[RMDB]
RNA sequence: GGGAACGACUCGAGUAGAGUCGAAAAGAGCGAUUAGACAAAGGGGUAGAGCUACAUAUUAGAUAGCUGUAUAAUCGUUCAAGUUACAUCAAAACAUCUUCAAUAUUUAUUACUUACUUUCCUGUCUGCCAGAGUACGGUAUUCGUACCGUACUCAACUACGGUGUGCUCUUCGGAGCACACCGUAGAAAAGAAACAACAACAACAAC
Reactivity to 2A3 in 0.01 (KOAc 150mM, MgCl2 10mM, bicine 150mM(pH8.5), 24C), signal-to-noise 1, nucleotides 027 to 156: g000a020g000c000g000a000u020u020a030g030a070c080a040a190a080g000g050g000g030u060a000g000a000g020c000u010a000c020a030u080a200u250u100a050g300a300u050a000g030c020u020g000u030a000u000a010a010u020c010g000u060u040c000a010a000g000u040u140a050c030a130u180c140a120a090a090a030c000a080u080c050u250u160c050a040a110u110a170u240u290u090a140u140u100a010c010u040u040a000c000u040u010u000c000c000u010g080u240c050u240g020c040c000a080g000a040g010u000a000c010g030g000u020a040u000u090c200g030u020a000c050c000g000u010a000c000u000c000a000a000
Source information
The data come from the RNA Mapping Database (RMDB), library M2RFPK. The record gives the reactivity of an RNA of 207 nucleotides to 2A3.